[RMDB]
RNA sequence: GGGAACGACUCGAGUAGAGUCGAAAAUCUGUGCCAGUGUGCCGGACAUCCGCGAUUCGCGCAGCCGUCUCUACCCCGGAAUCGCUGCACAUCAUGGGCUUGAAUAGUCAAUUAUGCCAGCUUGUCAAUUAUAGCCCUGAUUCGUCAGGGCUAUAAUAAAAGAAACAACAACAACAAC
Reactivity to 2A3 in 0.01 (KOAc 150mM, MgCl2 10mM, bicine 150mM(pH8.5), 24C), signal-to-noise 1, nucleotides 027 to 126: u010c000u010g110u100g020c040c000a090g080u050g030u070g050c100c050g000g000a050c020a080u040c000c020g110c000g090a120u090u050c040g040c000g000c010a000g000c010c040g040u010c010u030c040u090a150c000c030c030c000g000g040a050a020u050c020g000c020u020g090c030a030c010a020u040c030a040u130g010g050g000c000u000u040g060a070a060u030a030g090u080c040a000a060u210u000a020u100g000c020c010a020g010c020u040u120g070u140c050a000
Reactivity to DMS in 0.01 (KOAc 150mM, MgCl2 10mM, bicine 150mM(pH8.5), 24C), signal-to-noise 5, nucleotides 027 to 126: u010c040u010g000u000g020c020c020a160g020u000g020u010g010c040c030g000g010a070c150a100u000c070c050g020c060g000a090u010u000c100g020c070g010c060a100g010c070c050g000u000c040u000c040u010a200c070c010c020c050g010g000a070a050u000c130g010c020u000g010c080a070c030a040u000c080a050u010g000g010g000c030u000u000g000a090a090u000a040g010u000c040a050a060u000u000a070u010g000c240c020a070g010c040u000u000g010u000c100a100
Chemical mapping of a 177-nucleotide RNA with 2A3 and DMS. The reactions ran in a buffer of 150 mM KOAc, 10 mM MgCl2 and 150 mM bicine (pH 8.5), at 24 C. For 2A3 the reverse transcriptase was SuperScript II with manganese.